[RMDB]
This 207-nucleotide RNA was probed chemically with 2A3 and DMS. For DMS the reverse transcriptase was MarathonRT. The 2A3 profile rests on 2,255 reads. It was measured as part of the RMDB library OK3TST. The reactions ran in a buffer of 150 mM KOAc, 10 mM MgCl2 and 150 mM bicine (pH 8.5), at 24 C.
RNA sequence: GGGAACGACUCGAGUAGAGUCGAAAACAUGGUAUGGCCUCGCAUCCGGCCUACCCACAGAAUCAACAACUUUGGAUGCGGUGGGCGAGAGCCCUAAGAAGGAGUCUCCCCGCCUGGGGAGCUCCGUAUGACUUAAUGUAUUACCAGGCGAAUACAAACUAUAUAGCCAGUUCGCUGGCUAUAUAGUAAAAGAAACAACAACAACAAC
Reactivity to 2A3 in 0.01 (KOAc 150mM, MgCl2 10mM, bicine 150mM(pH8.5), 24C), signal-to-noise 3, nucleotides 027 to 156: c020a050u110g020g030u070a100u260g010g000c000c000u020c000g000c000a000u000c000c000g000g000c000c020u010a010c010c050c010a110c020a090g150a070a080u200c070a060a120c020a050a070c110u200u130u060g000g000a000u000g000c000g000g050u050g000g000g000c020g010a060g000a040g070c000c000c000u000a010a010g030a030a070g010g000a000g030u020c010u000c030c000c000c010g000c000c000u000g000g000g000g000a000g010c000u000c000c000g000u020a030u030g060a010c020u090u110a140a040u230g100u170a170u120u110a050c000c000a000g000g000c020g030a030a060u170a120c070a020a120
Reactivity to DMS in 0.01 (KOAc 150mM, MgCl2 10mM, bicine 150mM(pH8.5), 24C), signal-to-noise 1, nucleotides 027 to 156: c030a120u020g000g020u010a050u010g060g010c000c030u000c090g000c000a060u000c020c040g030g010c020c000u000a060c000c000c050a300c120a190g020a120a120u000c050a070a090c160a090a150c140u000u000u000g000g030a110u000g040c020g060g000u000g000g000g040c050g010a300g010a190g030c000c010c000u000a040a050g020a200a180g010g000a040g000u000c000u000c000c020c000c000g000c040c060u000g000g010g000g010a050g000c010u000c000c010g000u000a000u010g000a120c100u000u000a060a080u010g060u000a070u000u010a040c000c000a070g000g000c060g020a070a040u000a030c060a030a160